[RMDB]
The data come from the RNA Mapping Database (RMDB), library M2PK50. This 177-nucleotide RNA was probed chemically with 2A3 and DMS. For DMS the reverse transcriptase was MarathonRT.
RNA sequence: GGGAACGACUCGAGUAGAGUCGAAAAAUGGUGACCUUCGGGUCACCAUGGUGCGUAGCUCCGUUAAUUUAAUAGCUACGCUUAAUAAAUUUAAUUAACGCAAUGGAGCCUGCUUCGGCAGGCUCAAGGUAGGUAUGAGUUUCGACUCAUACCUACCAAAAGAAACAACAACAACAAC
Reactivity to 2A3 in 0.01 (KOAc 150mM, MgCl2 10mM, bicine 150mM(pH8.5), 24C), signal-to-noise 2, nucleotides 027 to 126: a000u020g000g000u010g000a000c000c000u030u050c300g040g000g000u000c000a000c010c000a000u000g010g000u060g010c000g000u000a010g000c000u020c070c010g010u000u040a070a030u130u130u100a260a170u200a030g040c000u000a000c000g000c000u030u100a110a060u110a020a030a020u120u200u200a050a100u050u050a110a060c010g040c060a030a100u050g110g000a030g000c010c010u020g020c000u000u030c160g070g000c000a000g000g000c010u000c000a020a020
Reactivity to DMS in 0.01 (KOAc 150mM, MgCl2 10mM, bicine 150mM(pH8.5), 24C), signal-to-noise 2, nucleotides 027 to 126: a020u000g010g030u000g000a000c000c000u000u030c190g020g030g010u000c000a000c000c000a000u000g020g020u020g010c000g020u000a010g000c010u010c300c080g020u010u000a030a030u000u000u010a120a120u010a050g010c000u000a000c000g000c010u000u000a010a010u010a020a050a100u010u000u000a040a050u000u010a020a020c020g010c300a070a100u020g000g000a020g000c000c000u010g010c010u000u030c260g020g000c010a010g000g010c000u000c000a000a000

Description:
For 2A3 the reverse transcriptase was SuperScript II with manganese. The RNA was probed in 150 mM KOAc, 10 mM MgCl2 and 150 mM bicine (pH 8.5) at 24 C.